[RMDB]
RNA sequence: GGGAACGACUCGAGUAGAGUCGAAAAGGUAUUGUUGGAAUCACCGUACCUAUUUAGGUUUACGCUCCAAGAUCGGUGGAUAGCAGCCCUAUCAAUAUCUAGGAGAACUGUGCUAUGUUUAGAAGAUUAAAUCGACGCAUCUUCGGAUGCGUCGAAACAUAAGCGUAUAGUUCGCUAUACGCUUAUGAAAAGAAACAACAACAACAAC
Reactivity to 2A3 in 0.01 (KOAc 150mM, MgCl2 10mM, bicine 150mM(pH8.5), 24C), signal-to-noise 4, nucleotides 027 to 156: g060g020u080a020u070u100g040u030u040g040g050a070a060u090c010a030c020c010g010u040a020c000c010u040a250u080u190u240a050g000g010u040u070u060a060c060g010c020u010c020c030a030a030g040a060u050c030g050g100u070g020g030a030u050a030g010c040a010g010c020c000c010u040a040u050c030a070a050u010a020u160c030u040a030g020g030a060g020a070a030c050u050g010u020g060c020u060a040u150g070u050u110u030a160g030a170a020g010a070u140u150a120a120a060u030c010g000a000c000g000c000a010u010c000u040u050c170g050g000a000u000g000c010g000u010c000g000a010a000a000
Reactivity to DMS in 0.01 (KOAc 150mM, MgCl2 10mM, bicine 150mM(pH8.5), 24C), signal-to-noise 3, nucleotides 027 to 156: g030g030u010a010u000u010g010u000u000g010g010a140a160u010c040a050c030c010g000u000a040c020c000u000a210u000u000u000a050g020g020u000u010u000a060c050g020c030u010c040c020a070a110g000a030u000c080g000g030u000g010g020a090u000a050g020c050a140g000c100c080c010u000a120u010c040a060a110u000a050u000c090u000a160g000g020a090g000a040a090c060u000g010u000g010c040u000a070u010g010u000u000u020a110g020a120a130g030a170u010u000a060a100a120u000c000g010a030c000g020c000a000u000c010u000u000c300g050g010a020u000g020c010g000u010c000g000a000a020a120